An RNA of 177 nucleotides, treated with 2A3 and DMS and read out base by base. DMS (dimethyl sulfate) methylates the pairing face of unpaired adenines and cytosines. The 2A3 profile rests on 4,526 reads. The reactions ran in a buffer of 150 mM KOAc, 10 mM MgCl2 and 150 mM bicine (pH 8.5), at 24 C. Values cover nucleotides 27 to 126. DMS adducts were read by reverse transcription with MarathonRT. The data come from the RNA Mapping Database (RMDB), library RFMREP.

RNA sequence: GGGAACGACUCGAGUAGAGUCGAAAAUGCCAAUGAUGUGCCUUAACAAUUGCACGUAUUAUCAGAUUUUCAGUGAUGAGUAUCACUUAUUUCUGAGGCAAAACUAAUUUGAGUUCGCUCAAAUUAGCUUUUUAUUAGCGUUCGCGCUAAUAAAAAGAAAAGAAACAACAACAACAAC
Reactivity to 2A3 in 0.01 (KOAc 150mM, MgCl2 10mM, bicine 150mM(pH8.5), 24C), signal-to-noise 4, nucleotides 027 to 126: u060g020c000c000a040a040u160g070a050u070g010u020g010c010c020u150u120a170a080c060a190a160u140u090g000c000a000c000g000u040a090u140u070a060u090c010a000g020a020u020u030u020u110c030a010g020u010g010a020u030g230a060g170u220a020u030c010a000c010u020u020a010u010u010u010c010u000g020a040g040g000c010a060a030a030a040c000u000a010a000u000u010u000g000a000g000u000u120c190g010c070u020c020a000a000a020u000u000a000g020
Reactivity to DMS in 0.01 (KOAc 150mM, MgCl2 10mM, bicine 150mM(pH8.5), 24C), signal-to-noise 5, nucleotides 027 to 126: u000g020c000c010a200a090u000g010a060u000g010u000g010c000c250u000u000a120a140c290a090a100u010u000g010c000a010c000g010u000a030u000u000a300u010c010a010g000a020u000u000u000u020c140a010g020u000g010a020u000g010a160g020u010a080u000c000a020c000u010u000a030u000u000u000c000u000g010a060g010g000c070a050a090a070a210c010u000a000a000u000u000u000g000a020g020u000u010c240g020c000u000c000a000a010a010u000u000a000g010